[RMDB]
RNA sequence: GGGAACGACUCGAGUAGAGUCGAAAAUGCGUAUAUUCUUGCGGUAUACCCUCAAGUAGCACUAGUAGUAGUUGGCGCUUGUUACUUAGCGGCAGUGUGUGCUUGCGUGUGGAGUAUAGUUAACUGGUAAUACGACUCACUAAAGGAGGUACACACCCACGGCAUAUUGUUUCGACAAUAUGCCGUGAAAAGAAACAACAACAACAAC
Reactivity to 2A3 in 0.01 (KOAc 150mM, MgCl2 10mM, bicine 150mM(pH8.5), 24C), signal-to-noise 4, nucleotides 027 to 156: u120g000c010g050u080a030u020a030u130u120c060u060u110g050c040g010g000u040a070u080a130c000c010c000u040c040a050a060g020u050a010g040c040a020c050u070a030g100u010a010g030u010a030g010u070u060g080g000c010g020c020u020u010g060u090u090a080c050u080u100a020g020c010g060g050c060a050g000u010g000u000g020u020g030c020u050u070g030c010g020u050g020u040g050g020a070g020u050a030u040a090g080u110u080a130a100c060u130g120g060u080a010a000u010a020c000g010a020c000u000c010a000c000u020a050a050a050g070g020a040g000g060u080a030c050a000c000a010c000c010
Reactivity to DMS in 0.01 (KOAc 150mM, MgCl2 10mM, bicine 150mM(pH8.5), 24C), signal-to-noise 1, nucleotides 027 to 156: u020g020c100g050u000a100u010a070u000u010c050u010u000g020c060g000g010u010a060u000a030c020c050c000u000c030a040a070g000u010a080g080c000a010c020u020a070g000u000a110g020u000a070g030u010u010g040g000c010g040c040u000u010g010u010u010a050c070u000u000a060g010c020g040g040c040a060g020u000g080u010g030u000g050c030u000u010g080c030g000u020g000u010g020g040a120g040u000a060u000a100g040u010u010a070a100c070u000g020g010u000a050a100u000a040c000g010a030c000u010c010a050c030u000a020a050a090g000g000a090g020g030u000a090c060a080c040a060c010c070
The record gives the reactivity of an RNA of 207 nucleotides to 2A3 and DMS. The reactions ran in a buffer of 150 mM KOAc, 10 mM MgCl2 and 150 mM bicine (pH 8.5), at 24 C. The 2A3 profile rests on 2,759 reads.